[RMDB]
RNA sequence: GGGAACGACUCGAGUAGAGUCGAAAAGCGUACUACUAGAGGUUUGGUGGAGAAACCACCAAUGAUCGUGACUAAGUACUAUGUCCCAAAUAGGACAUAGGAACUGUCACGAUCAUUGGUGGUUUCGUUGAAACCAAACUCCCCACCUAGUAUCGCAUCCUUUAAUUGUCUUCGGACAAUUAAAGGAAAAAGAAACAACAACAACAAC
Reactivity to DMS in 0.01 (KOAc 150mM, MgCl2 10mM, bicine 150mM(pH8.5), 24C), signal-to-noise 2, nucleotides 027 to 156: g020c010g030u010a050c010u000a000c010u000a040g010a020g000g000u000u000u000g000g040u000g000g020a240g010a010a040a020c010c000a000c000c000a000a000u010g000a010u000c000g070u020g010a020c020u000a060a090g030u010a190c000u000a000u000g020u000c010c000c010a040a160a260u000a040g010g000a050c020a020u000a010g010g000a070a070c250u010g000u000c000a030c000g000a000u000c010a000u000u000g030g040u000g030g000u000u000u000c000g020u010u000g010a300a250a060c000c000a010a010a030c020u000c020c010c010c020a090c150c030u000a020g020u000a010u010c030g020c010a190
Reactivity to 2A3 in 0.01 (KOAc 150mM, MgCl2 10mM, bicine 150mM(pH8.5), 24C), signal-to-noise 1, nucleotides 027 to 156: g000c020g070u120a090c020u000a000c000u020a050g000a030g040g000u000u000u000g010g010u000g000g010a030g000a000a000a000c000c000a000c000c000a010a000u030g010a000u000c030g000u010g000a000c000u020a030a010g020u020a000c010u000a000u000g010u010c020c020c020a090a190a080u300a050g000g000a000c000a000u010a010g000g010a020a000c000u000g010u000c000a000c020g000a000u000c000a000u000u000g000g000u000g000g010u000u000u000c000g000u020u000g000a000a000a000c000c000a000a000a000c010u030c000c000c010c000a040c000c000u000a000g010u030a030u300c030g000c020a020

Notes
Structure probing data (DMS and 2A3) for a 207-nucleotide construct. It was measured as part of the RMDB library RNAMAK. Conditions: 150 mM KOAc, 10 mM MgCl2 and 150 mM bicine (pH 8.5), 24 C. 2A3 adducts were read by reverse transcription with SuperScript II with manganese.